[RMDB]
RNA sequence: GGGAACGACUCGAGUAGAGUCGAAAAGUCAUUUCUUUAGGGAACCCCAUUCCCAUAAAUUCAGUAUCCAAAGCUGGUUGUUGUAUCUAUGGGAAAGGGUUCCCUAACGAAAUGAUCUUGGACGCAAUCUAUUGUGUUAUUUCGAUAACACAAUAGAAAAAGAAACAACAACAACAAC
Reactivity to 2A3 in 0.01 (KOAc 150mM, MgCl2 10mM, bicine 150mM(pH8.5), 24C), signal-to-noise 9, nucleotides 027 to 126: g010u000c000a000u000u000u010c000u000u000u000a000g000g000g010a000a010c000c010c010c070a290u030u010c010c000c000a000u010a000a030a000u030u040c000a000g030u020a040u030c010c010a100a120a190g180c300u080g030g010u020u020g010u010u010g010u010a010u000c010u000a000u000g000g000g000a000a010a010g000g000g000u000u000c000c000c000u000a000a000c000g000a000a000a000u000g000a000u030c020u010u040g090g040a030c050g020c140a030a070
Reactivity to DMS in 0.01 (KOAc 150mM, MgCl2 10mM, bicine 150mM(pH8.5), 24C), signal-to-noise 8, nucleotides 027 to 126: g000u000c000a010u000u000u000c000u000u000u000a000g000g000g000a010a000c000c000c000c080a210u000u010c000c000c000a010u000a000a020a020u000u000c000a010g010u000a020u010c010c020a040a190a190g020c260u010g010g000u000u010g020u000u000g000u000a000u000c030u000a010u000g000g010g000a020a060a260g000g000g000u000u000c000c000c000u000a000a000c020g000a010a010a010u000g000a000u020c020u000u000g010g010a140c090g010c150a120a090
Source: RMDB libraries RFM100 and RFMREP, as collected in RNAgym. This 177-nucleotide RNA was probed chemically with 2A3 and DMS. Reactivities are given for positions 27 through 126. For 2A3 the reverse transcriptase was SuperScript II with manganese. The RNA was probed in 150 mM KOAc, 10 mM MgCl2 and 150 mM bicine (pH 8.5) at 24 C.